[RMDB]
RNA sequence: GGGAACGACUCGAGUAGAGUCGAAAACUCAAUGACUUCGGUCAUUGAGAAAGGACAAAAGUCCAACUGAGCACCUAUGAGCUCAUACAUCGUCAUAGCAAAAAACACACACGUUCGCGUGUGUGAAGGCUUUAUCCUUGUUCGCAAGGAUAAAGCCAAAAGAAACAACAACAACAAC
Reactivity to DMS in 0.01 (KOAc 150mM, MgCl2 10mM, bicine 150mM(pH8.5), 24C), signal-to-noise 1, nucleotides 027 to 126: c000u000c000a010a020u000g010a080c020u000u070c300g080g000u000c010a000u000u000g000a000g010a000a010a140g000g000a030c010a080a120a110a130g000u000c000c000a060a040c130u020g030a020g000c060a130c130c030u000a010u010g010a020g000c070u000c000a020u000a110c270a030u000c160g000u000c000a040u000a000g020c300a000a000a010a010a020a070c000a000c000a020c000a010c010g000u000u030c220g050c000g020u030g000u000g050u000g000a010a110
Reactivity to 2A3 in 0.01 (KOAc 150mM, MgCl2 10mM, bicine 150mM(pH8.5), 24C), signal-to-noise 3, nucleotides 027 to 126: c000u000c000a010a010u000g000a000c010u020u060c220g110g000u000c000a010u000u010g000a000g010a030a040a000g010g000a010c040a040a300a090a080g010u000c000c040a030a020c060u040g000a010g000c010a050c010c010u030a010u040g030a000g000c010u010c010a060u230a120c090a090u130c130g070u000c010a010u080a020g040c150a030a010a010a040a120a050c000a000c020a000c000a000c000g020u060u040c270g000c010g040u010g000u020g010u000g000a000a010

The record gives the reactivity of an RNA of 177 nucleotides to DMS and 2A3. The 2A3 profile rests on 2,842 reads.